The record gives the reactivity of an RNA of 177 nucleotides to DMS.
The reactions ran in a buffer of 150 mM KOAc, 10 mM MgCl2 and 150 mM bicine (pH 8.5), at 24 C.
[RMDB]
RNA sequence: GGGAACGACUCGAGUAGAGUCGAAAAACACUAGUUGUAUGGCCCGCGAAGGAUGCCCAGAAGGUACCCGUAGGUAACAAGUGACACUAUGGAUCUGAUCUGGGGCUGGAUACCUCUAUCUUGGUGAGCUAGGUGCAUAGUUCGCUAUGCACCUAGCAAAAGAAACAACAACAACAAC
Reactivity to DMS in 0.01 (KOAc 150mM, MgCl2 10mM, bicine 150mM(pH8.5), 24C), signal-to-noise 1, nucleotides 027 to 126: a030c090a040c090u000a120g010u000u010g010u010a070u000g010g020c000c000c020g060c250g010a130a190g010g010a090u000g000c000c000c000a030g050a060a300g010g010u000a080c040c010c010g000u000a010g000g000u050a000a010c010a080a080g010u000g010a190c300a000c010u000a010u000g000g000a040u010c020u020g000a130u010c000u000g000g000g000g030c020u000g010g020a110u000a070c020c000u000c120u000a020u000c100u010u010g010g000u000g000a080
Reactivities are rounded to 0.1 and cut off at 0 and 3.